RNA sequence: GGGAACGACUCGAGUAGAGUCGAAAACCACACGAUCAUCCAGUACAUUUCACCACAUUGUCUGCAGCUCACCUCGCAGGAAUCACUUCGGUGAGCGAGGGCUGUUCGACUCCACGCGGAAAUGUCGCCCAUACGCAUUAUUCGUAAUGCGUAUGGGAAAAGAAACAACAACAACAAC
Reactivity to DMS in 0.01 (KOAc 150mM, MgCl2 10mM, bicine 150mM(pH8.5), 24C), signal-to-noise 3, nucleotides 027 to 126: c020c010a160c210a120c140g010a070u020c070a060u010c050c070a040g010u010a070c080a000u000u010u000c010a090c070c060a090c130a030u010u000g000u010c000u000g000c060a080g000c060u000c060a280c020c000u010c040g000c010a150g000g000a100a170u000c100a040c030u000u030c140g010g040u000g000a030g020c040g030a010g030g000g000c050u000g000u030u010c300g000a050c000u010c150c050a080c160g000c040g030g020a020a050a010u010g000u010c080g020
Reactivity to 2A3 in 0.01 (KOAc 150mM, MgCl2 10mM, bicine 150mM(pH8.5), 24C), signal-to-noise 9, nucleotides 027 to 126: c010c010a030c010a020c050g100a110u130c050a050u040c100c040a030g070u110a050c010a040u020u020u040c110a150c100c000a050c040a100u060u160g010u010c010u020g000c000a010g000c010u040c070a160c010c000u010c010g010c010a030g110g230a070a060u060c010a020c050u050u100c170g100g000u010g000a010g010c010g000a020g000g010g000c000u010g010u020u050c040g010a010c000u030c040c040a090c100g060c070g040g010a020a030a000u040g020u020c010g030